[RMDB]
RNA sequence: GGGAACGACUCGAGUAGAGUCGAAAACGUACGUGGAGACACGUACGACGAGACUUCGGUCUCGAAUCGGCGGGAGUCUAUGCCGCCUCGUGUAAGGAGUCGGUUGUCGGCGAGCCAACGGACUCAAGAGCUUACACGAACAAUUGAGCAUAGGCAAGCCUAACUUGUAAUUCGUUACAAGUUAGGCAAAAGAAACAACAACAACAAC
Reactivity to 2A3 in 0.01 (KOAc 150mM, MgCl2 10mM, bicine 150mM(pH8.5), 24C), signal-to-noise 3, nucleotides 027 to 156: c020g000u000a000c000g010u000g000g020a050g010a030c000a000c000g000u000a000c000g000a020c000g010a010g000a000c000u090u100c280g110g000u000c010u010c000g030a070a140u140c060g010g000c020g030g020g020a100g020u000c000u000a000u000g000c000c020g000c010c030u010c010g000u050g000u010a020a000g040g010a000g010u010c150g040g020u120u000g020u020c010g020g160c220g040a010g020c010c010a000a000c020g090g000a000c000u000c030a050a050g100a050g190c000u010u000a000c000a000c010g010a010a040c060a000a080u150u290g070a050g010c010a000u000a000g010g000c010a030a010
Reactivity to DMS in 0.01 (KOAc 150mM, MgCl2 10mM, bicine 150mM(pH8.5), 24C), signal-to-noise 2, nucleotides 027 to 156: c000g010u010a010c000g100u000g000g010a300g000a300c010a030c000g000u000a020c000g010a090c050g000a260g000a030c020u000u010c180g040g010u000c000u020c000g000a060a040u010c050g020g020c020g060g010g010a180g000u000c010u000a000u000g010c000c010g000c090c020u000c030g010u020g000u000a030a040g010g010a050g040u000c040g000g050u000u000g020u010c070g020g000c040g030a290g000c230c010a000a030c020g020g000a030c010u000c000a060a120g010a190g010c010u010u000a030c020a030c000g010a030a090c070a090a180u010u010g000a080g010c010a020u010a010g020g020c030a100a270
The data come from the RNA Mapping Database (RMDB), library OK3TST.
Structure probing data (2A3 and DMS) for a 207-nucleotide construct.
The reactions ran in a buffer of 150 mM KOAc, 10 mM MgCl2 and 150 mM bicine (pH 8.5), at 24 C.
2A3 adducts were read by reverse transcription with SuperScript II with manganese.